[RMDB]
RNA sequence: GGGAACGACUCGAGUAGAGUCGAAAAGACUCGCGGAAUUUCAUUCAAGAAGAAGGUAACGGAGAAAGGAGCGGGCCUCCCGAUCCGAGUGGUCCACGGCGUAUCAAGUUUGGAGUCAUCCGGCCGAAGACACACCUGUUCGCAGGUGUGAAAAGAAACAACAACAACAAC
Reactivity to DMS in 0.01 (KOAc 150mM, MgCl2 10mM, bicine 150mM(pH8.5), 24C), signal-to-noise 9, nucleotides 027 to 129: g030a060c010u000c060g050c050g020g010a100a040u030u030u040c110a080u040u040c100a100a070g010a020a020g000a040a030g010g000u040a030a130c100g020g000a030g020a070a110a040g000g000a090g030c140g000g000g000c010c020u020c020c030c050g010a020u000c080c040g000a080g000u030g000g000u000c000c040a060c100g000g000c070g010u050a070u010c080a060a050g010u010u020u000g010g010a090g010u030c090a090u020c050c020g000g000c090c050g020a030a040g020a130
Reactivity to 2A3 in 0.01 (KOAc 150mM, MgCl2 10mM, bicine 150mM(pH8.5), 24C), signal-to-noise 9, nucleotides 027 to 129: g020a000c010u010c030g020c050g050g070a050a040u090u090u100c070a070u110u070c050a090a050g030a070a010g000a020a010g100g010u090a060a020c070g020g010a020g010a050a070a020g040g010a020g020c040g000g030g040c000c000u040c000c000c000g010a020u030c030c020g020a020g050u060g010g010u000c000c020a040c060g030g000c020g030u070a070u170c050a080a080g030u050u100u110g040g000a020g010u040c010a050u010c020c000g010g010c010c010g040a030a010g080a020
Annotation
Structure probing data (DMS and 2A3) for a 170-nucleotide construct. Reactivities are given for positions 27 through 129. The reactions ran in a buffer of 150 mM KOAc, 10 mM MgCl2 and 150 mM bicine (pH 8.5), at 24 C. For 2A3, 37,020 sequencing reads were counted. It was measured as part of the RMDB library 15KLIB.